[RMDB]
RNA sequence: GGGAACGACUCGAGUAGAGUCGAAAAGAUAUGGAACCCAACGUGAGAGGCGAGGAUCAUGACGGUCGGAAACGACCGCAUGGGAGCCUCUCUGGGUUCCUAAGUCAAAGGGACGUUCGCGUCCCAACAACCGAAACUAGUUCGCUAGUUUCGGUUGAAAAGAAACAACAACAACAAC
Reactivity to DMS in 0.01 (KOAc 150mM, MgCl2 10mM, bicine 150mM(pH8.5), 24C), signal-to-noise 2, nucleotides 027 to 126: g000a010u010a140u010g000g000a010a020c000c000c020a040a150c300g020u010g000a020g020a020g020g030c000g000a080g010g020a010u040c000a010u000g000a180c020g040g010u000c010g000g000a020a030a110c000g010a010c020c000g030c010a000u000g000g000g020a020g030c000c000u000c010u000c000u000g000g000g000u000u000c000c000u000a000a040g010u000c030a070a160a210g000g000g010a020c000g050u000u010c240g030c010g030u000c000c010c000a080a080
Reactivity to 2A3 in 0.01 (KOAc 150mM, MgCl2 10mM, bicine 150mM(pH8.5), 24C), signal-to-noise 1, nucleotides 027 to 126: g000a010u040a010u120g000g010a000a000c010c000c050a040a070c220g300u300g070a030g010a010g000g000c020g090a300g070g000a020u030c000a010u010g200a250c000g000g010u000c010g000g010a060a030a020c000g000a010c000c000g010c000a000u000g010g000g000a010g000c000c000u000c000u000c000u000g010g000g000u000u010c000c000u020a020a000g020u000c030a000a120a190g010g000g010a010c020g030u060u120c300g020c000g150u040c000c000c000a000a000

Structure probing data (DMS and 2A3) for a 177-nucleotide construct.
For 2A3 the reverse transcriptase was SuperScript II with manganese.
The reactions ran in a buffer of 150 mM KOAc, 10 mM MgCl2 and 150 mM bicine (pH 8.5), at 24 C.
DMS adducts were read by reverse transcription with MarathonRT.
The DMS profile rests on 3,245 reads.